[RMDB]
RNA sequence: GGGAACGACUCGAGUAGAGUCGAAAAGAUAUGGAGCGUCAUCCCAGGCAUCGAUCGUGGAUCGGAAACGAUCCACGGGAGCCUGGAUACGCUCCUAAGUCAAAACCUCUAGCUUCGGCUAGAGGAACUACUUCUUCCUGUUCGCAGGAAGAAGUAGAAAAGAAACAACAACAACAAC
Reactivity to DMS in 0.01 (KOAc 150mM, MgCl2 10mM, bicine 150mM(pH8.5), 24C), signal-to-noise 3, nucleotides 027 to 126: g020a050u000a260u010g000g000a000g020c000g030u000c300a080u010c280c050c140a020g010g000c030a300u010c220g010a050u020c010g020u010g000g010a010u000c000g000g000a050a030a100c010g010a010u000c000c000a000c000g000g000g000a030g050c000c010u020g000g010a010u000a000c000g020c000u000c000c000u000a010a060g010u000c020a120a100a150a190c000c000u000c010u000a000g000c000u000u010c270g040g010c000u000a010g000a000g010g000a010a070
Reactivity to 2A3 in 0.01 (KOAc 150mM, MgCl2 10mM, bicine 150mM(pH8.5), 24C), signal-to-noise 3, nucleotides 027 to 126: g020a010u050a020u120g000g000a010g000c010g030u070c120a210u260c130c020c000a000g020g000c000a140u300c050g040a030u010c010g020u000g000g000a000u010c000g010g010a030a040a000c000g000a000u030c000c000a000c010g000g000g000a010g000c000c010u000g020g000a020u020a030c010g010c000u010c000c000u000a010a000g000u000c020a030a040a060a260c000c000u000c000u020a010g000c020u080u090c300g170g000c010u000a000g010a000g000g010a000a000